RNA sequence: GGGAACGACUCGAGUAGAGUCGAAAAGAUAUGGAUUGAUUUGUUGACGAGCGGUGUCGGAAACGACAUUCGCUCGAAGGAAUUGUCCUAAGUCGUAUCUGGACAACGGUUCGCCGUUGUCCAGAAAACUGAUAACGCUGUUCGCAGCGUUAUCAGUAAAAGAAACAACAACAACAAC
Reactivity to 2A3 in 0.01 (KOAc 150mM, MgCl2 10mM, bicine 150mM(pH8.5), 24C), signal-to-noise 1, nucleotides 027 to 126: g000a020u130a000u150g030g010a010u050u290g030a020u060u300u000g280u290u220g200a190c100g000a010g000c010g030g010u030g000u000c010g000g080a030a030a010c030g020a010c000a040u260u180c070g000c030u000c000g000a000a000g010g010a000a000u000u000g010u000c000c000u030a130a040g060u010c070g030u170a170u130c010u010g030g000a000c010a010a000c000g080g040u050u110c270g000c100c020g040u050u000g000u000c010c000a000g000a000a000a010
Reactivity to DMS in 0.01 (KOAc 150mM, MgCl2 10mM, bicine 150mM(pH8.5), 24C), signal-to-noise 1, nucleotides 027 to 126: g000a050u030a300u010g000g000a000u000u010g010a010u000u000u000g010u010u000g030a300c060g000a010g010c000g000g000u000g010u000c010g010g000a150a090a130c000g000a000c000a000u000u020c030g030c020u000c010g000a080a020g010g010a000a010u000u000g000u000c000c000u000a030a150g020u010c010g010u000a120u000c000u000g020g010a020c010a000a040c010g000g000u010u000c300g010c000c000g020u000u000g020u010c000c000a000g000a010a030a050
The record gives the reactivity of an RNA of 177 nucleotides to 2A3 and DMS. DMS adducts were read by reverse transcription with MarathonRT. The 2A3 profile rests on 1,116 reads.